[RMDB]
RNA sequence: GGGAACGACUCGAGUAGAGUCGAAAAUCAAUAGCCUUACGCUACCACCCCGUCGACACCGCGGUCGAAGUUCUUACGGCGCCAGAUCCUGUUUACUACAGCAACGAGUUGCAGGAUCUGGUUCGAGCGAUUGUACGUGUUUCGACACGUACAAUCGAAAAGAAACAACAACAACAAC
Reactivity to DMS in 0.01 (KOAc 150mM, MgCl2 10mM, bicine 150mM(pH8.5), 24C), signal-to-noise 3, nucleotides 027 to 126: u010c150a120a110u000a080g000c000c080u000u030a100c240g000c010u000a060c090c050a130c010c000c000c040g010u000c060g020a030c030a080c070c090g020c120g020g020u000c010g000a040a130g010u000u000c040u000u000a090c110g030g010c200g000c010c000a000g000a030u000c000c000u010g000u000u000u000a000c000u000a100c060a150g000c220a080a050c140g030a050g000u010u000g000c000a030g010g010a020u010c010u000g010g010u000u000c000g000a120g010
Reactivity to 2A3 in 0.01 (KOAc 150mM, MgCl2 10mM, bicine 150mM(pH8.5), 24C), signal-to-noise 1, nucleotides 027 to 126: u100c030a060a160u030a070g000c000c020u120u200a060c100g000c000u020a010c010c010a070c050c000c000c010g070u020c000g040a010c020a020c060c090g010c040g050g000u030c000g020a100a080g030u060u000c010u090u060a040c070g040g000c060g080c000c000a030g000a010u000c020c000u000g010u120u140u030a030c010u070a110c010a070g050c070a190a090c120g040a020g020u040u020g000c000a000g000g000a040u000c000u010g000g000u000u020c000g000a000g010